[RMDB]
An RNA of 177 nucleotides, treated with DMS and 2A3 and read out base by base. For 2A3 the reverse transcriptase was SuperScript II with manganese. Values are in units of 0.01, from 0 to 300, in steps of 10.
RNA sequence: GGGAACGACUCGAGUAGAGUCGAAAACAUUUGGGCUUAAGCGUAUUCCAUGGAAAGUUAUCGUCCCACAUUUCGGAAAUUAUAUUCCGAGCCAGCAAGAAAAUCUUCUCUGUUACAAUUUGACAUAUAACCUAAACACUUUCGAGUGUUUAGGUUAAAAAGAAACAACAACAACAAC
Reactivity to DMS in 0.01 (KOAc 150mM, MgCl2 10mM, bicine 150mM(pH8.5), 24C), signal-to-noise 5, nucleotides 027 to 126: c070a110u020u010u010g010g010g010c070u010u000a080a090g010c050g010u000a070u010u010c040c020a070u020g000g000a060a070a110g000u010u010a050u000c070g020u020c010c010c010a110c240a100u020u010u000c000g000g000a010a040a130u020u020a140u000a180u010u000c000c010g010a040g010c160c080a040g020c090a060a070g000a070a050a080a110u010c030u000u010c040u000c040u000g010u000u010a050c160a050a080u020u000u000g010a110c120a070u010a120
Reactivity to 2A3 in 0.01 (KOAc 150mM, MgCl2 10mM, bicine 150mM(pH8.5), 24C), signal-to-noise 4, nucleotides 027 to 126: c020a070u080u070u050g030g030g010c010u110u100a110a020g020c030g030u010a060u060u030c020c010a030u060g090g040a090a070a040g040u080u120a100u170c030g020u010c000c020c000a070c030a030u140u170u040c000g000g110a000a010a030u200u070a100u050a120u170u000c000c000g000a000g000c040c010a020g000c040a070a020g060a100a130a050a060u010c020u080u000c030u010c020u020g050u070u020a050c030a100a150u040u090u180g090a040c040a010u140a020